[RMDB]
An RNA of 177 nucleotides, treated with 2A3 and DMS and read out base by base. Reactivities are given for positions 27 through 126. DMS adducts were read by reverse transcription with MarathonRT. For DMS, 4,222 sequencing reads were counted. For 2A3 the reverse transcriptase was SuperScript II with manganese. The reactions ran in a buffer of 150 mM KOAc, 10 mM MgCl2 and 150 mM bicine (pH 8.5), at 24 C.
RNA sequence: GGGAACGACUCGAGUAGAGUCGAAAAAUAAGGGCUUCCUGGGCCAAAGUCUGAAAGGAAUGCGAUCAUGCCCGUCAAACUACCGCCCGAUAUACUGCGUUGCUUAGACCAUAGGGCUGAAACGCUCAUCACCAGAUGUAUUCGUACAUCUGGUGAUAAAAGAAACAACAACAACAAC
Reactivity to 2A3 in 0.01 (KOAc 150mM, MgCl2 10mM, bicine 150mM(pH8.5), 24C), signal-to-noise 2, nucleotides 027 to 126: a000u060a050a070g050g010g010c010u030u020c020c060u040g020g020g020c020c040a070a020a000g040u010c020u080g090a080a050a030g080g050a090a070u070g020c040g040a050u070c060a060u160g000c000c000c000g000u050c020a050a060a120c010u080a080c070c000g000c000c000c000g020a010u100a030u020a170c100u090g040c020g050u040u020g000c050u060u110a040g030a020c020c020a100u120a090g040g000g050c020u010g010a000a050a000c030g000c000u010c020
Reactivity to DMS in 0.01 (KOAc 150mM, MgCl2 10mM, bicine 150mM(pH8.5), 24C), signal-to-noise 5, nucleotides 027 to 126: a070u010a080a150g010g010g030c040u000u000c020c010u000g000g010g000c020c170a080a130a090g010u000c020u000g000a080a070a070g000g000a090a060u010g000c110g000a140u000c090a070u000g010c030c010c050g010u010c080a020a060a070c090u000a090c170c190g000c020c020c010g000a090u010a070u010a090c150u000g010c050g010u000u010g010c080u000u000a070g000a090c050c080a100u000a110g010g010g000c010u000g000a040a080a070c110g000c020u000c100